[RMDB]
RNA sequence: GGGAACGACUCGAGUAGAGUCGAAAAAUUCAAGACUCGAAUUUAUGAAAUGCCAGCAGAACUCAAAACACUUUCAUGCACGUUUCGAGUUUUUAGCUGUUUGUCUAUUUGUUUAAUUGCCGGCAAACAUACGAUGCCCUUUCGAGGGCAUCGUAUGAAAAGAAACAACAACAACAAC
Reactivity to 2A3 in 0.01 (KOAc 150mM, MgCl2 10mM, bicine 150mM(pH8.5), 24C), signal-to-noise 4, nucleotides 027 to 126: a000u080u050c030a090a050g060a090c030u060c150g100a060a060u050u110u070a200u130g110a040a020a120u090g040c040c040a010g000c000a000g000a040a030c000u020c030a040a060a040a020c040a020c060u110u300u230c100a080u170g040c140a020c220g010u020u020u010c010g010a010g000u020u010u000u030u010a020g030c010u010g030u000u010u020g010u000c010u030a170u110u100u070g070u040u050u040a150a100u100u080g040c040c040g030g010c020a020a030a010
Reactivity to DMS in 0.01 (KOAc 150mM, MgCl2 10mM, bicine 150mM(pH8.5), 24C), signal-to-noise 2, nucleotides 027 to 126: a090u030u000c050a140a060g050a080c070u020c030g010a050a040u010u010u030a090u060g020a050a110a070u010g040c110c010a100g010c030a060g050a020a060c090u000c020a060a010a030a030c020a170c080u060u000u050c150a050u000g040c200a090c150g000u000u000u030c110g000a030g000u000u000u000u000u090a070g000c050u010g020u030u030u000g000u000c050u000a120u020u010u030g010u010u000u000a030a120u000u020g000c010c050g000g030c130a010a050a170